An RNA of 207 nucleotides, treated with 2A3 and DMS and read out base by base. The RNA was probed in 150 mM KOAc, 10 mM MgCl2 and 150 mM bicine (pH 8.5) at 24 C. For 2A3, 20,830 sequencing reads were counted.
RNA sequence: GGGAACGACUCGAGUAGAGUCGAAAAGAACUAUACAUGUUCUGGUUGAAGAUAAGCAACAGUUUAUUGGAAGACCAUAAUCAUUCUGACGUGCAAAUCGAUGAUUUAAGAUGUGUAUAGUGGCGAAAGACCAAUCGAACUGUGUGGUAGCUGGUUCACGAACAGAAUAGUUCGCUAUUCUGUUCGUAAAAGAAACAACAACAACAAC
Reactivity to 2A3 in 0.01 (KOAc 150mM, MgCl2 10mM, bicine 150mM(pH8.5), 24C), signal-to-noise 9, nucleotides 027 to 156: g030a010a010c000u010a000u020a040c010a020u040g060u090u050c050u070g020g010u060u110g020a040a020g000a030u020a020a010g010c030a020a280c070a260g000u010u010u000a010u010u010g030g020a070a040g010a030c000c010a020u060a030a010u010c010a010u120u070c100u250g050a050c050g140u200g090c120a030a050a110u050c020g010a010u020g010a010u010u040u090a110a050g010a020u030g010u000g010u010a000u000a030g020u030g040g040c050g070a090a060a020g060a040c030c000a020a050u090c040g020a030a030c030u050g020u020g010u040g200g050u070a040g030c050u060g050g010u040u050c030
Reactivity to DMS in 0.01 (KOAc 150mM, MgCl2 10mM, bicine 150mM(pH8.5), 24C), signal-to-noise 6, nucleotides 027 to 156: g020a090a040c010u000a050u000a050c030a050u000g010u000u000c100u010g020g030u000u000g000a300a300g000a060u000a030a060g020c020a130a150c190a130g020u000u000u000a030u000u000g010g010a240a250g010a050c000c020a200u010a030a030u000c010a030u000u000c070u010g040a040c030g010u010g000c210a070a080a040u000c010g010a030u000g010a050u000u000u000a080a100g000a030u000g030u000g020u000a030u000a040g020u000g010g010c020g000a080a050a110g020a180c020c020a050a090u000c070g010a030a080c040u000g000u000g010u000g000g030u000a080g030c010u000g000g010u000u000c030
Background:
It was measured as part of the RMDB library PDB130.